[RMDB]
RNA sequence: GGGAACGACUCGAGUAGAGUCGAAAACACAAUCAUUCCAAUAUGAUGAAAGUAGAACUAUUAGUUCUUUAGGUUUAUACUUUGCUAGUAAAGGAGGUAAGUCUAGUAAUGUAACUGUACAAAUUCGUGGUAUGGGAGAUACAGGUUACCCUAACAACACCGAGUCUUCUUUCGAGAAGACUCGGUGAAAAGAAACAACAACAACAAC
Reactivity to 2A3 in 0.01 (KOAc 150mM, MgCl2 10mM, bicine 150mM(pH8.5), 24C), signal-to-noise 1, nucleotides 027 to 156: c120a000c050a000a080u050c010a100u120u010c030c040a070a040u070a040u100g080a030u050g040a040a050a060g110u220a070g000a000a000c040u050a080u300u170a270g020u000u060c000u060u010u100a000g020g000u070u010u030a100u040a110c000u010u030u000g000c010u010a000g000u120a030a050a140g090g000a040g000g100u070a070a010g000u020c000u010a010g040u010a000a010u080g040u040a000a010c000u050g000u110a040c020a080a030a070u120u110c040g040u090g070g030u070a040u070g040g070g030a040g010a030u020a050c030a070g010g000u040u030a040c000c000c010u020a150a050c030a100a000